[RMDB]
The record gives the reactivity of an RNA of 177 nucleotides to 2A3 and DMS. Values cover nucleotides 27 to 126. The reactions ran in a buffer of 150 mM KOAc, 10 mM MgCl2 and 150 mM bicine (pH 8.5), at 24 C. For DMS, 1,615 sequencing reads were counted.

RNA sequence: GGGAACGACUCGAGUAGAGUCGAAAAUGGUUCAACAUCACGUCUCUGACGUGCUUGUUGACUGUCUGGCUGACUGCAGAGGCGGCUGUUGCCUGUGACGCCCCGUCUCUUCUCCUGAAGACAAUCAACCAUGCACGAUGUUCGCAUCGUGCAUGGUAAAAGAAACAACAACAACAAC
Reactivity to 2A3 in 0.01 (KOAc 150mM, MgCl2 10mM, bicine 150mM(pH8.5), 24C), signal-to-noise 2, nucleotides 027 to 126: u070g020g010u130u080c010a000a010c000a010u000c000a000c030g020u000c130u010c110u300g010a000c010g000u010g000c090u030u040g040u000u010g010a000c000u000g030u010c010u010g090g000c020u050g000a190c070u110g080c010a000g000a030g070g060c000g000g030c080u080g140u140u090g060c000c030u190g090u140g050a060c050g020c030c010c000c010g010u010c020u000c030u070u020c030u000c010c030u070g030a020a000g070a030c020a050a110u060c020a020
Reactivity to DMS in 0.01 (KOAc 150mM, MgCl2 10mM, bicine 150mM(pH8.5), 24C), signal-to-noise 2, nucleotides 027 to 126: u010g000g020u000u000c030a030a020c010a010u010c000a000c010g000u000c000u020c240u030g000a030c010g020u000g010c220u000u000g020u000u010g010a020c050u000g020u000c020u000g000g010c140u000g000a070c040u010g000c100a070g010a110g000g000c010g000g000c110u000g020u000u000g010c060c040u000g020u000g000a140c080g000c050c130c000c040g020u010c040u000c000u000u000c010u000c020c050u000g000a100a060g020a080c160a050a080u020c130a040
It was measured as part of the RMDB library OK2TRN.